Record summary
This 177-nucleotide RNA was probed chemically with DMS and 2A3. In probing experiments dimethyl sulfate is read out at A N1 and C N3, which are open when not base-paired. For DMS the reverse transcriptase was MarathonRT. For DMS, 947 sequencing reads were counted. The reactions ran in a buffer of 150 mM KOAc, 10 mM MgCl2 and 150 mM bicine (pH 8.5), at 24 C. Reactivities are given for positions 27 through 126. Source: RMDB library M2PK50, as collected in RNAgym.
RNA sequence: GGGAACGACUCGAGUAGAGUCGAAAACGACGGGUCUUCGGACCCGUCGAAAUAAUGCGUAGCUCGCGCUUCGCAGGCAUCGAGUAGGUCGAGCCACCUACAAAAGCUUCGAGUUCGCUCGAAGCAAGAUAGUUCUGCUGUUCGCAGCAGAACUAUCAAAAGAAACAACAACAACAAC
Reactivity to DMS in 0.01 (KOAc 150mM, MgCl2 10mM, bicine 150mM(pH8.5), 24C), signal-to-noise 1, nucleotides 027 to 126: c020g000a000c010g000g000g020u000c000u000u000c230g020g000a010c000c000c000g000u020c000g000a000a120a050u030a120a130u000g020c010g030u000a030g000c000u020c280g000c300g020c020u000u000c010g010c000a050g020g010c110a110u000c030g000a130g000u000a050g010g000u010c020g010a090g010c100c050a090c000c000u000a000c060a050a080a090a110g000c010u000u010c000g020a010g010u010u020c160g000c000u000c000g030a010a000g000c000a000a010
Reactivity to 2A3 in 0.01 (KOAc 150mM, MgCl2 10mM, bicine 150mM(pH8.5), 24C), signal-to-noise 1, nucleotides 027 to 126: c010g000a000c000g000g000g000u000c030u060u100c270g120g040a000c000c000c000g030u000c000g000a000a000a010u160a020a060u050g000c010g010u010a010g010c040u000c130g100c010g000c030u040u000c010g000c030a010g070g000c020a100u120c070g030a050g030u070a020g040g090u040c030g010a050g020c040c020a010c000c000u010a050c000a010a130a000a010g000c000u000u010c010g000a010g010u020u110c190g080c060u000c000g010a000a000g040c010a000a010